RNA sequence: GGGAACGACUCGAGUAGAGUCGAAAAGAUAACUGUGGUUAAGGAACUCGGCAAAAUGCCCCCGUAACUUCGGGAGAAGGGGGGCCUCGUCUGGUGACGGAACUUGCUUCCUGAGCUGGGUGGGGCCUCGAGAUGCAAGUUUCGACUUGCAUCUCGAAAAAGAAACAACAACAACAAC
Reactivity to DMS in 0.01 (KOAc 150mM, MgCl2 10mM, bicine 150mM(pH8.5), 24C), signal-to-noise 3, nucleotides 027 to 126: g020a070u000a040a100c060u000g010u010g000g000u000u020a140a090g030g020a070a040c130u020c210g020g030c030a120a070a090a080u010g000c020c010c070c030c030g040u000a060a130c030u000u000c090g030g010g000a060g010a150a080g000g000g010g000g000g000c000c050u010c010g000u010c000u000g040g000u000g000a300c300g000g010a020a000c040u020u000g020c200u030u000c000c010u000g000a300g000c000u000g020g000g000u000g000g020g010g000c010c000
Reactivity to 2A3 in 0.01 (KOAc 150mM, MgCl2 10mM, bicine 150mM(pH8.5), 24C), signal-to-noise 3, nucleotides 027 to 126: g110a020u170a090a050c030u060g020u090g060g040u080u060a080a020g090g000a030a110c070u020c070g010g020c050a070a080a130a110u280g010c000c000c000c000c000g000u010a020a040c040u050u070c040g050g010g010a100g090a020a130g060g020g000g000g010g010c010c000u020c000g000u000c000u000g020g010u040g030a010c010g010g010a000a000c020u200u300g060c050u030u000c000c010u010g020a020g000c000u030g000g010g000u010g010g000g000g000c020c000
Source information: The record gives the reactivity of an RNA of 177 nucleotides to DMS and 2A3. For DMS, 2,859 sequencing reads were counted. As a SHAPE reagent, 2A3 marks flexible, mostly unpaired nucleotides at the ribose 2'-OH. Source: RMDB library RFM100, as collected in RNAgym. The RNA was probed in 150 mM KOAc, 10 mM MgCl2 and 150 mM bicine (pH 8.5) at 24 C. Reactivities are given for positions 27 through 126.